[RMDB]
RNA sequence: GGGAACGACUCGAGUAGAGUCGAAAAAAAGGAACGUGAGCCUUGUAGGGGCUGUAGCGGGGGCCUGGCCCAAGAUUUUCCCAGUCGGUGUUUGAGUGCGUACCUCUGCUGGCUGCAUGCUCCCUGCACAGGGCCUAAGGACAAGGUCAUGCCCUUGUGAGCGUUUAUAAUUCGUUAUAAACGCUCAAAAAGAAACAACAACAACAAC
Reactivity to DMS in 0.01 (KOAc 150mM, MgCl2 10mM, bicine 150mM(pH8.5), 24C), signal-to-noise 1, nucleotides 027 to 156: a030a060a030g010g000a080a070c040g050u030g000a120g030c010c010u010u010g010u000a210g000g020g010g030c020u010g000u000a080g050c040g050g020g060g020g000c060c060u000g020g010c030c000c030a070a080g010a180u010u000u000u030c000c010c010a250g010u000c050g000g000u000g010u010u010u010g000a100g010u000g070c130g020u000a100c070c010u010c040u010g030c060u010g010g000c030u020g020c040a030u000g000c020u010c040c020c000u010g000c040a050c070a050g010g010g010c010c000u010a070a120g000g010a060c050a090a050g020g030u000c010a060u000g010c010c010c010u000u000g000
Reactivity to 2A3 in 0.01 (KOAc 150mM, MgCl2 10mM, bicine 150mM(pH8.5), 24C), signal-to-noise 2, nucleotides 027 to 156: a000a000a040g050g000a110a000c020g000u000g020a050g050c000c000u000u000g000u000a030g020g000g010g000c000u020g040u100a060g030c000g020g010g000g000g010c010c040u030g020g010c010c050c010a000a010g030a050u170u160u070u050c000c020c000a000g020u010c000g070g010u030g050u040u220u170g010a020g000u100g060c100g100u080a050c020c000u010c020u070g020c000u010g020g010c000u030g020c030a030u120g000c010u100c050c000c020u040g000c000a000c000a000g060g050g140c000c000u070a140a060g100g000a000c010a000a010g020g000u020c000a010u030g040c010c000c000u100u170g050

Structure probing data (DMS and 2A3) for a 207-nucleotide construct. It was measured as part of the RMDB library OK3TST. Values cover nucleotides 27 to 156. The 2A3 profile rests on 983 reads. The DMS profile rests on 3,304 reads. The RNA was probed in 150 mM KOAc, 10 mM MgCl2 and 150 mM bicine (pH 8.5) at 24 C. As a SHAPE reagent, 2A3 marks flexible, mostly unpaired nucleotides at the ribose 2'-OH.